This 207-nucleotide RNA was probed chemically with 2A3. The RNA was probed in 150 mM KOAc, 10 mM MgCl2 and 150 mM bicine (pH 8.5) at 24 C.
RNA sequence: GGGAACGACUCGAGUAGAGUCGAAAAUCCCCACUUCGGUGGGGAAAAAAUCCUAAGUCUUCCACCAUAUCUCUAGCGUGUACAACAGCUAUCGGAAACGAUAGACAUGUAUCGGGUAUGGGAGAAGAUAUGGAAAAAAGUAAGGUUCGCCUUACAAGGAUCAGAGAAAGUUCGCUUUCUCUGAUCCAAAAGAAACAACAACAACAAC
Reactivity to 2A3 in 0.01 (KOAc 150mM, MgCl2 10mM, bicine 150mM(pH8.5), 24C), signal-to-noise 2, nucleotides 027 to 156: u000c000c010c000c010a010c020u070u070c130g120g000u040g000g010g000g000a070a010a020a000a020a120u070c040c010u040a150a020g050u000c000u000u020c000c050a100c010c000a060u010a050u060c080u040c070u170a060g070c050g090u140g040u110a060c040a120a040c040a240g000c010u000a000u010c000g060g030a100a080a090c010g000a000u000a020g070a050c000a060u060g010u010a070u080c030g000g010g010u010a020u010g000g000g010a050g000a000a010g010a000u020a060u030g050g040a030a020a080a000a030a110g030u050a010a000g010g030u030u170c290g080c050c000u000u010a010c010a000a040